[RMDB]
RNA sequence: GGGAACGACUCGAGUAGAGUCGAAAAGUCAUUAUGUUCGCAUAAUGACAAAUAUAUGCGACUAUAUAAAACCUGAUAGCCGUCCAAGAUCAUGUAUCGGCAAAAACAGACGAUUCGUCGUCUGUAACGUUGAACGUUAGUUCGCUAACGUUCAACGAAAAGAAACAACAACAACAAC
Reactivity to 2A3 in 0.01 (KOAc 150mM, MgCl2 10mM, bicine 150mM(pH8.5), 24C), signal-to-noise 3, nucleotides 027 to 126: g020u010c010a020u010u030a010u010g020u040u070c210g000c090a010u000a010a010u030g020a000c000a000a070a000u060a000u010a020u060g080c050g120a080c090u000a000u000a000u030a090a150a010a060c010c020u030g080a170u110a100g010c000c000g030u020c050c030a090a030g040a200u140c050a080u140g050u090a050u090c010g020g000c030a070a030a000a040a000c000a000g000a000c000g010a030u040u070c200g050u010c000g000u000c090u000g000u000a020a020
Reactivity to DMS in 0.01 (KOAc 150mM, MgCl2 10mM, bicine 150mM(pH8.5), 24C), signal-to-noise 2, nucleotides 027 to 126: g010u000c000a010u000u000a000u000g020u010u030c250g010c000a000u000a010a000u000g000a020c000a050a060a050u000a060u000a030u000g000c040g010a050c080u020a040u000a040u000a070a070a080a190c060c040u010g000a110u010a060g040c000c010g010u000c110c100a080a080g020a060u010c160a090u000g020u010a080u020c060g010g000c120a050a010a060a100a040c000a010g010a010c000g010a020u000u000c200g000u000c010g010u000c000u000g000u010a020a080